[RMDB]
RNA sequence: GGGAACGACUCGAGUAGAGUCGAAAAGAGGCGGCGAUGGGCGCGGCGGCACACCUGAGCCACUUUUUGGAGCUGCGGCGGCAGUGGCUGACCAUUGCGGGCGACCAGGCCGCCAGCCUCAUGCGCCCUACCGGAUACGGUUCGCCGUAUCCGGUAGAAAAGAAACAACAACAACAAC
Reactivity to DMS in 0.01 (KOAc 150mM, MgCl2 10mM, bicine 150mM(pH8.5), 24C), signal-to-noise 2, nucleotides 027 to 126: g020a190g010g010c050g020g020c020g020a080u010g010g000g000c050g030c070g030g020c090g010g020c080a130c100a120c110c050u010g010a190g000c010c010a080c060u020u000u000u000u000g010g010a140g000c050u010g010c120g000g020c060g010g010c040a040g030u000g000g000c040u000g000a080c040c030a190u010u000g000c200g000g020g000c010g000a060c080c010a050g010g010c010c030g020c000c000a000g010c020c030u010c050a080u000g000c070g000c000c020
Reactivity to 2A3 in 0.01 (KOAc 150mM, MgCl2 10mM, bicine 150mM(pH8.5), 24C), signal-to-noise 2, nucleotides 027 to 126: g130a020g040g020c060g080g010c080g080a060u030g000g000g000c030g000c070g040g070c010g000g000c040a010c000a060c090c040u030g050a000g030c020c020a080c050u180u200u030u100u150g030g040a040g010c030u060g010c070g160g000c080g060g000c020a030g040u020g040g050c060u070g050a160c030c010a050u020u300g080c250g030g030g000c040g010a060c030c010a060g020g030c040c000g000c000c000a000g000c000c000u040c020a010u160g070c020g000c000c020